[RMDB]
Chemical mapping of a 177-nucleotide RNA with 2A3 and DMS. For 2A3, 3,457 sequencing reads were counted. The RNA was probed in 150 mM KOAc, 10 mM MgCl2 and 150 mM bicine (pH 8.5) at 24 C. Source: RMDB library OK2TRN, as collected in RNAgym. 2A3 adducts were read by reverse transcription with SuperScript II with manganese. Values cover nucleotides 27 to 126.

RNA sequence: GGGAACGACUCGAGUAGAGUCGAAAACACUUUUUAUGAUUUGAGAAUUCCUUCAUGGUCACGUGCUCUGUUUUUAUCAUGGUUGGGAGCCUGCAGAGCAAUAAGGGACAUGCCUUUGCUGAUUUGAUCUACUAUGAUUCUUCGGAAUCAUAGUAGAAAAAGAAACAACAACAACAAC
Reactivity to 2A3 in 0.01 (KOAc 150mM, MgCl2 10mM, bicine 150mM(pH8.5), 24C), signal-to-noise 4, nucleotides 027 to 126: c040a030c000u140u110u070u110u150a180u260g140a150u040u110u140g060a060g040a070a090u050u050c000c000u030u090c030a060u080g130g000u040c020a010c090g050u040g000c000u000c010u010g140u040u090u050u070u060a240u150c030a070u180g020g050u060u070g030g070g060a020g030c000c030u000g000c000a010g010a030g010c000a000a050u080a030a000g040g000g030a000c020a020u080g030c000c020u110u070u100g030c060u050g030a230u040u060u120g050a060
Reactivity to DMS in 0.01 (KOAc 150mM, MgCl2 10mM, bicine 150mM(pH8.5), 24C), signal-to-noise 5, nucleotides 027 to 126: c090a110c080u010u010u010u010u020a080u030g000a100u000u010u000g000a110g010a190a180u010u000c020c010u000u010c070a040u000g010g000u000c020a060c100g010u000g000c010u000c000u010g000u000u010u010u000u010a100u020c090a040u020g030g020u000u010g030g020g020a220g000c030c020u000g000c020a020g010a030g010c010a030a050u010a090a090g000g010g000a100c060a060u000g010c120c070u000u000u000g020c040u000g000a140u000u000u000g010a170